[RMDB]
RNA sequence: GGGAACGACUCGAGUAGAGUCGAAAAGAAAGGCAGCGAGUGCAGCCCACGCAGAGGCAUGCUUUUGCAUGCCCAGUCGAGCCCACGACUUAGGGCAGCUGCGGCACUGAGGGCAGCUGCCGAAAGACGUGACUAUCCCAUUCGUGGGAUAGUCACGAAAAGAAACAACAACAACAAC
Reactivity to DMS in 0.01 (KOAc 150mM, MgCl2 10mM, bicine 150mM(pH8.5), 24C), signal-to-noise 2, nucleotides 027 to 126: g010a150a170a180g000g000c010a040g010c010g030a090g060u000g010c020a160g000c010c030c050a180c140g020c150a090g030a120g000g020c010a010u010g000c010u000u000u000u000g010c000a060u010g000c000c000c030a010g020u000c000g010a110g020c000c030c000a300c020g000a030c010u000u030a130g010g020g010c030a100g030c060u000g010c070g000g020c120a040c070u000g000a060g000g010g050c000a100g040c000u010g000c010c000g000a040a030a050g020a160
Reactivity to 2A3 in 0.01 (KOAc 150mM, MgCl2 10mM, bicine 150mM(pH8.5), 24C), signal-to-noise 2, nucleotides 027 to 126: g070a010a040a010g030g020c030a000g000c010g070a050g080u110g020c020a030g010c020c010c000a050c040g020c060a030g050a180g130g000c010a010u020g050c010u220u240u280u300g000c000a000u010g010c000c000c000a000g000u000c010g000a010g010c010c010c010a030c000g030a000c000u050u240a060g040g030g000c020a000g000c010u090g000c010g000g020c090a070c110u080g030a110g000g010g020c000a000g000c020u010g000c000c000g000a020a000a000g050a040
The record gives the reactivity of an RNA of 177 nucleotides to DMS and 2A3.
For 2A3, 1,853 sequencing reads were counted.
The RNA was probed in 150 mM KOAc, 10 mM MgCl2 and 150 mM bicine (pH 8.5) at 24 C.
Values cover nucleotides 27 to 126.
For 2A3 the reverse transcriptase was SuperScript II with manganese.
For DMS, 1,391 sequencing reads were counted.
Source: RMDB library OK2TRN, as collected in RNAgym.